[RMDB]
RNA sequence: GGGAACGACUCGAGUAGAGUCGAAAAGAUAUGGAUCCCUGAAUCUUCGAUAAGCUGAUCGGAAACGAUACAGCUUUUGACGAAGUGAGGAUCCUAAGUCAAACGUGGUAGCUUCGGCUACCACGAAGUAGUAUUAGUAGUUCGCUACUAAUACUACAAAAGAAACAACAACAACAAC
Reactivity to DMS in 0.01 (KOAc 150mM, MgCl2 10mM, bicine 150mM(pH8.5), 24C), signal-to-noise 9, nucleotides 027 to 126: g000a030u000a270u010g000g000a000u000c010c010c060u000g010a130a090u010c010u000u000c000g010a120u010a010a010g020c000u000g000a080u000c000g010g000a080a050a120c000g000a010u000a140c010a000g000c000u000u000u000u000g020a210c100g000a000a010g010u000g010a110g010g000a010u000c000c000u000a020a080g010u000c020a080a110a270c020g020u000g000g010u000a010g010c010u000u010c240g030g000c000u000a000c000c000a000c000g010a010a050
Reactivity to 2A3 in 0.01 (KOAc 150mM, MgCl2 10mM, bicine 150mM(pH8.5), 24C), signal-to-noise 8, nucleotides 027 to 126: g000a010u030a020u090g000g010a000u020c030c000c000u020g160a190a200u110c010u020u000c040g230a250u030a140a000g000c000u000g000a010u010c000g000g030a040a030a020c010g010a010u230a300c000a010g000c000u000u010u010u050g110a060c020g000a000a010g020u030g060a260g010g000a010u000c000c000u010a070a010g040u030c050a080a050a090c020g000u000g000g000u010a010g000c010u050u060c300g140g000c010u010a000c000c000a000c000g000a000a010

Structure probing data (DMS and 2A3) for a 177-nucleotide construct.
Values are in units of 0.01, from 0 to 300, in steps of 10.
DMS adducts were read by reverse transcription with MarathonRT.
Values cover nucleotides 27 to 126.
Source: RMDB library TTRDEL, as collected in RNAgym.
The RNA was probed in 150 mM KOAc, 10 mM MgCl2 and 150 mM bicine (pH 8.5) at 24 C.
The DMS profile rests on 24,598 reads.